[RMDB]
Chemical mapping of a 207-nucleotide RNA with DMS and 2A3. Conditions: 150 mM KOAc, 10 mM MgCl2 and 150 mM bicine (pH 8.5), 24 C. 2A3 adducts were read by reverse transcription with SuperScript II with manganese. DMS (dimethyl sulfate) methylates the pairing face of unpaired adenines and cytosines. Values are in units of 0.01, from 0 to 300, in steps of 10.

RNA sequence: GGGAACGACUCGAGUAGAGUCGAAAAGGGCAUUUCGAUGCCCGUUAUGGGGUCUUUAGAUGCACGACGAUCGGUGAACUACUCCUGAAGCCUCCACGGGAGCACCGGGAGUGCUACCUAAAGACGGAGGCACCCGGACUUUGACGUUCGCGUCAAAUACCCAAAAUUUAUUCGUAAAUUUUGGGUAAAAAGAAACAACAACAACAAC
Reactivity to DMS in 0.01 (KOAc 150mM, MgCl2 10mM, bicine 150mM(pH8.5), 24C), signal-to-noise 1, nucleotides 027 to 156: g000g010g060c010a040u000u000u000c180g020a070u000g030c020c000c000g020u000u000a030u000g030g000g020g000u000c010u000u020u000a050g010a060u000g010c020a040c030g000a120c180g010a110u000c020g010g090u010g030a210a150c090u010a300c010u020c000c010u000g030a060a190g010c000c000u000c010c010a300c010g010g000g020a050g010c000a000c000c020g050g000g010a120g040u000g000c000u000a010c040c010u000a040a040a070g020a110c070g000g010a080g060g000c000a070c040c050c000g020g020a090c100u000u010u000g000a070c040g020u010u010c120g040c040g050u000c010a050a020a190
Reactivity to 2A3 in 0.01 (KOAc 150mM, MgCl2 10mM, bicine 150mM(pH8.5), 24C), signal-to-noise 2, nucleotides 027 to 156: g020g000g000c030a030u140u030u190c290g110a040u050g020c010c020c010g000u040u090a160u260g020g000g020g030u000c000u000u000u010a010g000a010u030g000c000a010c020g300a080c010g000a140u000c000g020g000u010g020a070a110c090u180a070c010u290c010c000u000g010a010a010g000c000c000u000c010c000a020c030g000g000g000a000g000c010a000c000c000g000g000g010a020g000u000g000c000u020a040c000c000u000a010a000a010g000a030c060g000g000a000g000g000c010a010c000c010c000g070g000a100c080u030u040u040g000a000c000g030u060u080c160g040c010g160u010c000a010a020a050